[RMDB]
RNA sequence: GGGAACGACUCGAGUAGAGUCGAAAAUAUUCCGGUGUGGGAUACUUGGUAAUAUGUAACGCUAAUUGCAUAAGAUUGUAGGACGGAAUUUACAGUCUUGGUUUUUAUAAACCUGAAACUCAGUAAGAAUAGUAAGAGCGGUUCGCCGCUCUUACAACCUUAGUCUAGACUUCGGUCUAGACUAAGGAAAAGAAACAACAACAACAAC
Reactivity to DMS in 0.01 (KOAc 150mM, MgCl2 10mM, bicine 150mM(pH8.5), 24C), signal-to-noise 1, nucleotides 027 to 156: u000a110u030u000c000c040g060g000u000g020u010g020g020g030a180u000a030c040u020u000g040g000u000a020a090u000a040u010g020u000a110a090c170g000c170u000a050a110u000u000g040c040a030u000a010a070g000a050u000u000g020u030a040g000g030a140c040g000g010a140a300u000u010u000a030c050a020g020u000c000u010u010g030g010u000u000u020u010u010a120u000a090a020a030c010c000u000g000a080a060a090c040u000c110a070g010u000a040a080g000a100a100u000a150g020u000a000a020g000a010g010c000g030g080u010u000c300g050c050c000g030c000u000c000u000u050a010c000a060a120
Reactivity to 2A3 in 0.01 (KOAc 150mM, MgCl2 10mM, bicine 150mM(pH8.5), 24C), signal-to-noise 3, nucleotides 027 to 156: u090a030u000u030c040c030g040g060u130g010u110g050g120g030a050u020a040c010u060u040g010g020u040a040a020u040a050u040g090u060a080a030c100g000c200u130a120a110u140u060g020c010a000u010a060a000g010a060u010u030g000u030a010g020g080a040c020g020g010a010a020u040u030u060a030c010a000g010u000c000u000u000g070g000u010u040u020u010u080a220u140a120a010a000c000c000u000g010a070a030a040c040u040c030a020g030u040a120a040g040a170a090u080a120g010u000a000a000g000a000g010c000g000g000u010u030c110g020c030c000g000c010u000c000u010u000a000c000a000a000
This 207-nucleotide RNA was probed chemically with DMS and 2A3.
It was measured as part of the RMDB library M2RFPK.
Reactivities are given for positions 27 through 156.
2A3 adducts were read by reverse transcription with SuperScript II with manganese.
The reactions ran in a buffer of 150 mM KOAc, 10 mM MgCl2 and 150 mM bicine (pH 8.5), at 24 C.